[RMDB]
RNA sequence: GGGAACGACUCGAGUAGAGUCGAAAAGAUAUGGAUAUCCCGGAGCAACAGCCGUGAGAUCGGAAACGAUCUACGGACAUGCUCAGAUAUCCUAAGUCAAACCCAGUAUUCUUCGGAAUACUGGGAAGAAUAUAAGGCUGUUCGCAGCCUUAUAUUCAAAAGAAACAACAACAACAAC
Reactivity to DMS in 0.01 (KOAc 150mM, MgCl2 10mM, bicine 150mM(pH8.5), 24C), signal-to-noise 5, nucleotides 027 to 126: g000a020u000a030u010g000g000a010u000a000u000c020c300c250g020g000a020g020c010a190a100c150a160g010c000c000g010u010g000a040g010a010u000c000g000g000a010a020a040c000g010a010u000c000u000a010c010g000g000a010c080a110u010g010c000u000c010a150g000a010u000a000u010c000c000u000a010a120g000u000c000a120a170a240c000c000c000a000g000u000a000u000u000c000u000u020c230g020g000a020a010u000a000c000u000g010g000g000a020a010
Reactivity to 2A3 in 0.01 (KOAc 150mM, MgCl2 10mM, bicine 150mM(pH8.5), 24C), signal-to-noise 6, nucleotides 027 to 126: g000a010u030a010u070g010g020a010u050a010u040c180c300c300g300g040a010g000c090a060a240c100a280g010c010c010g050u110g290a150g010a030u000c000g000g000a000a020a000c000g000a000u010c000u020a000c010g010g040a010c050a100u300g000c000u000c000a000g010a000u000a000u000c010c000u020a020a000g010u000c040a080a020a300c000c000c010a000g000u010a000u000u000c020u030u110c300g150g010a000a000u010a010c000u020g000g000g000a000a030
An RNA of 177 nucleotides, treated with DMS and 2A3 and read out base by base. 2A3 adducts were read by reverse transcription with SuperScript II with manganese. DMS adducts were read by reverse transcription with MarathonRT. It was measured as part of the RMDB library TTRDES.